[RMDB]
RNA sequence: GGGAACGACUCGAGUAGAGUCGAAAAGUAGGGCUUCGGCCCUACAAAAAAACCUUUGUGUACACAUAGAAUAGCGAUGCCACGAAUCCCAUUGGGAUUCGGAGCUAAUCGCUACUAUUUGUACACUCUGGUAAAAAUCGCCUAUUCGUAGGCGAAAGAGAUCUUGUUUGUUCGCAAACAAGAUCUCAAAAGAAACAACAACAACAAC
Reactivity to 2A3 in 0.01 (KOAc 150mM, MgCl2 10mM, bicine 150mM(pH8.5), 24C), signal-to-noise 2, nucleotides 027 to 156: g020u000a010g000g000g020c040u070u070c300g120g000c040c010c020u010a030c010a000a000a000a000a000a000a010c010c020u010u000u010g000u000g000u000a000c000a000c020a000u020a020g160a300a150u020a040g140c010g030a020u020g020c010c000a060c040g000a000a000u000c000c010c140a300u210u300g000g000g000a000u000u000c010g010g000a000g000c040u110a080a040u020c000g000c000u010a020c010u000a000u000u020u010g000u030a000c000a000c000u000c000u000g010g000u070a150a080a000a000a030u020c010g000c000c000u020a020u050u040c280g110u050a010g010g000c000g020a020a010a010